RNA sequence: GGGAACGACUCGAGUAGAGUCGAAAAACUCCACAGCUGUAAGGCUGUGGGCCCGAGAGAAGCGCUCUCUCUCGCCCUUUUGCUCCCCCUCGGCAUUGAGAUGUCCAUAGGCCAGGGGUGAGAUCCAACGGGAUCACAGCUGAUCUAAGGUGGGCAGGAUGCAGUAAUAGUUCGCUAUUACUGCAUCAAAAGAAACAACAACAACAAC
Reactivity to DMS in 0.01 (KOAc 150mM, MgCl2 10mM, bicine 150mM(pH8.5), 24C), signal-to-noise 2, nucleotides 027 to 156: a090c060u000c010c000a010c000a040g040c010u010g030u000a170a230g020g000c000u010g010u000g020g000g050c050c020c000g000a060g000a040g040a130a300g000c100g020c180u000c040u010c020u010c020u000c000g050c020c050c040u030u010u000u000g020c000u000c010c000c000c000c000u000c130g010g060c030a150u000u030g010a160g000a160u010g000u010c010c100a170u010a130g030g050c060c010a100g000g050g030g030u010g000a090g000a080u000c020c030a110a120c100g010g030g000a100u000c030a110c040a210g020c120u000g010a070u020c030u010a180a130g000g010u000g010g000g060c110a090g010
Reactivity to 2A3 in 0.01 (KOAc 150mM, MgCl2 10mM, bicine 150mM(pH8.5), 24C), signal-to-noise 3, nucleotides 027 to 156: a000c060u040c000c010a030c000a010g060c010u040g090u280a110a060g100g000c000u000g000u020g010g010g000c010c040c040g000a000g000a010g000a160a090g080c130g050c090u020c000u000c000u000c020u000c000g000c000c010c000u060u120u190u280g040c000u030c020c000c000c000c000u030c020g000g000c000a010u050u100g090a110g030a150u140g080u000c030c020a040u050a110g120g000c000c010a000g000g000g000g010u120g010a010g010a010u000c010c020a120a210c190g120g030g000a000u020c000a000c020a070g070c070u090g010a060u070c030u110a060a070g100g000u020g000g000g000c000a040g070